Conditions: 150 mM KOAc, 10 mM MgCl2 and 150 mM bicine (pH 8.5), 24 C.
Structure probing data (DMS and 2A3) for a 177-nucleotide construct.
For 2A3, 2,931 sequencing reads were counted.
For 2A3 the reverse transcriptase was SuperScript II with manganese.
For DMS the reverse transcriptase was MarathonRT.

RNA sequence: GGGAACGACUCGAGUAGAGUCGAAAAAUCCUUCACCAUCGAAAGCGGCGCUAAAGGCCCGGCAGCUGGCAACGUAACUUCUCUGUAAGUUCAAGCCGCUAAGAAUCGAGAAUCCCUGCCUGAUGGCGACAUAAAAGUUGUUCGCAACUUUUAUGUCAAAAGAAACAACAACAACAAC
Reactivity to DMS in 0.01 (KOAc 150mM, MgCl2 10mM, bicine 150mM(pH8.5), 24C), signal-to-noise 3, nucleotides 027 to 126: a130u020c010c030u000u010c070a140c030c030a060u000c020g020a100a140a090g010c020g000g000c020g020c130u010a050a120a170g010g000c020c030c050g000g010c100a030g000c060u010g010g030c040a090a090c170g010u020a040a000c010u000u000c020u010c180u000g020u030a010a030g010u000u010c060a120a190g030c000c000g020c020u000a060a110g000a080a100u000c090g010a080g020a150a110u010c020c010c010u010g000c070c020u000g010a090u000g010g020c190
Reactivity to 2A3 in 0.01 (KOAc 150mM, MgCl2 10mM, bicine 150mM(pH8.5), 24C), signal-to-noise 3, nucleotides 027 to 126: a000u040c010c000u030u120c050a090c040c010a080u040c030g060a130a060a020g040c040g020g000c010g000c110u150a160a130a160g110g000c080c010c000g100g000c020a030g000c040u120g000g020c020a050a020c030g020u070a000a020c020u030u020c140u020c080u170g170u260a020a000g000u000u000c020a030a020g000c010c000g000c010u000a020a030g040a020a090u090c070g010a020g040a090a060u040c010c020c020u030g030c000c000u110g070a090u160g040g030c040